[RMDB]
RNA sequence: GGGAACGACUCGAGUAGAGUCGAAAAGCCUUUCGGGGUACACGAGCGGCGAACGCGCGAGUAACACGUGGGUGAUCUGCCCUGCGCUCUGGGAUAAGCUUGGGAAACUGGGACUGAUACCGGAUAGAAUUUAAUAAUGAUUCGUCAUUAUUAAAUUAAAAGAAACAACAACAACAAC
Reactivity to DMS in 0.01 (KOAc 150mM, MgCl2 10mM, bicine 150mM(pH8.5), 24C), signal-to-noise 9, nucleotides 027 to 126: g010c010c010u000u020u020c030g010g010g000g020u010a040c060a080c060g000a120g020c060g000g010c140g020a130a130c080g010c030g010c050g000a130g010u010a090a100c110a090c040g010u010g000g000g010u010g000a110u020c070u020g000c030c020c020u000g010c060g010c040u010c020u010g010g000g000a070u010a080a090g000c020u010u000g000g000g000a060a080a080c060u000g000g000g000a090c050u010g010a090u010a080c020c020g000g000a090u030a070g000
Reactivity to 2A3 in 0.01 (KOAc 150mM, MgCl2 10mM, bicine 150mM(pH8.5), 24C), signal-to-noise 7, nucleotides 027 to 126: g010c010c000u010u030u060c030g010g010g010g020u060a020c030a010c070g050a040g020c040g070g010c070g060a170a080c050g030c010g000c020g070a050g120u120a120a050c050a000c080g030u040g020g020g010u040g030a140u020c030u070g020c000c000c000u010g010c040g000c010u020c010u030g050g000g010a040u030a090a010g010c000u010u040g020g000g000a040a050a030c010u020g010g010g060a030c010u040g030a030u050a100c020c000g010g020a020u040a090g090

Structure probing data (DMS and 2A3) for a 177-nucleotide construct. Conditions: 150 mM KOAc, 10 mM MgCl2 and 150 mM bicine (pH 8.5), 24 C. For 2A3 the reverse transcriptase was SuperScript II with manganese.